[RMDB]
RNA sequence: GGGAACGACUCGAGUAGAGUCGAAAAUCAUGCUAUCACCUGCUAACUGUGUCUGGUACAGUUAGUGGUGAGCGAGAGUUCACGAGGUGUCAUUGUACCAGACGAUGACGCUUAGGUGAUAGCAUGCCUAGUCGUUUCAAUUCGUUGAAACGACUAGAAAAGAAACAACAACAACAAC
Reactivity to DMS in 0.01 (KOAc 150mM, MgCl2 10mM, bicine 150mM(pH8.5), 24C), signal-to-noise 3, nucleotides 027 to 126: u020c010a000u000g000c000u000a000u000c000a000c000c000u000g010c010u000a070a090c080u000g000u010g000u000c120u010g020g020u020a040c000a010g010u000u000a020g020u000g010g010u000g000a010g010c010g010a270g000a210g000u000u000c000a010c010g020a090g010g010u000g000u000c100a010u000u000g010u010a140c140c150a090g010a100c010g010a010u000g000a090c090g000c010u000u000a020g000g010u000g010a010u000a000g000c000a000u000g000c270
Reactivity to 2A3 in 0.01 (KOAc 150mM, MgCl2 10mM, bicine 150mM(pH8.5), 24C), signal-to-noise 4, nucleotides 027 to 126: u100c000a000u000g000c000u000a000u000c000a000c000c010u020g000c010u010a040a060c040u070g020u030g100u250c090u200g170g010u160a010c000a010g010u030u030a020g010u050g110g000u010g000a000g000c010g010a090g000a000g010u010u010c010a010c040g100a090g040g060u060g040u060c010a020u000u020g020u040a130c070c040a060g030a120c010g010a030u020g010a000c040g000c020u050u070a010g000g000u000g000a000u000a000g020c010a000u000g000c010